Structure probing data (DMS and 2A3) for a 177-nucleotide construct.
RNA sequence: GGGAACGACUCGAGUAGAGUCGAAAACGGGGUAAUUUUAUUUGGUAGCGAGAGGUGACAAUCGAUGACCUACCAAGGAGGACCGGAGGCGAAAGCGAUUACCAAGAACUGAUCUGACGAUCAAGCACAUUAUGUAGCACUUCGGUGCUACAUAAUGAAAAGAAACAACAACAACAAC
Reactivity to DMS in 0.01 (KOAc 150mM, MgCl2 10mM, bicine 150mM(pH8.5), 24C), signal-to-noise 3, nucleotides 027 to 126: c090g010g030g000g010u010a030a020u000u010u000u020a090u000u010u000g000g010u000a020g010c020g000a030g000a040g010g000u000g010a100c190a120a180u000c050g000a050u000g010a050c300c000u000a020c010c040a020a020g010g000a120g010g010a100c040c090g030g010a100g010g010c030g010a020a070a070g010c060g030a070u000u010a090c010c010a070a070g000a110a080c160u000g020a020u000c020u010g060a140c180g000a050u000c020a070a110g020c200a180
Reactivity to 2A3 in 0.01 (KOAc 150mM, MgCl2 10mM, bicine 150mM(pH8.5), 24C), signal-to-noise 2, nucleotides 027 to 126: c020g000g010g000g120u060a080a110u010u120u040u130a160u100u090u040g020g010u000a000g020c000g030a000g010a000g030g050u100g090a060c050a040a050u020c040g160a230u020g000a010c000c000u010a000c000c010a000a020g030g040a030g000g040a010c010c000g040g010a090g020g070c020g050a040a060a000g030c020g010a030u030u070a020c010c020a000a040g030a110a060c060u010g000a020u000c000u060g120a070c100g000a030u020c010a020a000g050c020a020

The data come from the RNA Mapping Database (RMDB), library RFMREP.